[RMDB]
Structure probing data (2A3 and DMS) for a 207-nucleotide construct. For 2A3, 1,193 sequencing reads were counted. The reactions ran in a buffer of 150 mM KOAc, 10 mM MgCl2 and 150 mM bicine (pH 8.5), at 24 C. The DMS profile rests on 2,325 reads. It was measured as part of the RMDB library OK3TST. In probing experiments dimethyl sulfate is read out at A N1 and C N3, which are open when not base-paired. Reactivities are rounded to 0.1 and cut off at 0 and 3.
RNA sequence: GGGAACGACUCGAGUAGAGUCGAAAAGGUUCUGGAAAAAAGGGUGGCUUCUUGUCUACAUUUUUGAUGGGAUGUCUCGACACAAACCGAAACGUUUGGACGACAGUAACAAAGGUGCACACAGGCCACACGGACGAUGAACUGAAACGGUGCAACGGAGCAUUGGAAAUUUCGAUUUCCAAUGCUCAAAAGAAACAACAACAACAAC
Reactivity to 2A3 in 0.01 (KOAc 150mM, MgCl2 10mM, bicine 150mM(pH8.5), 24C), signal-to-noise 2, nucleotides 027 to 156: g080g010u050u040c020u030g060g050a170a030a010a010a000a040g030g010g030u030g010g000c010u090u000c020u070u090g000u000c010u070a100c020a100u080u010u050u050u060g120a160u070g040g000g110a040u040g040u030c020u030c090g130a060c050a040c050a130a010a010c040c040g110a040a060a030c050g020u050u030u030g030g010a000c040g030a000c000a030g040u080a070a000c030a040a030a010g020g010u030g000c010a000c010a000c010a080g030g010c010c000a020c020a020c000g020g010a020c030g010a050u040g000a020a000c020u010g000a030a030a030c050g060g000u050g030c020a030a030c040g070
Reactivity to DMS in 0.01 (KOAc 150mM, MgCl2 10mM, bicine 150mM(pH8.5), 24C), signal-to-noise 2, nucleotides 027 to 156: g050g020u010u010c010u010g010g020a000a080a040a100a040a180g000g000g120u000g010g030c030u000u000c090u000u010g000u000c020u000a070c040a060u000u000u000u000u000g010a180u020g010g000g040a170u010g010u020c000u020c030g020a240c120a100c040a030a070a050c030c060g010a220a060a170c110g050u000u000u000g060g010a120c010g010a060c010a010g000u020a110a130c030a050a070a030g010g060u020g030c040a060c060a100c080a080g000g010c010c020a020c000a090c000g020g000a050c090g010a210u000g020a040a050c020u010g010a060a060a090c010g000g020u010g020c030a040a110c080g020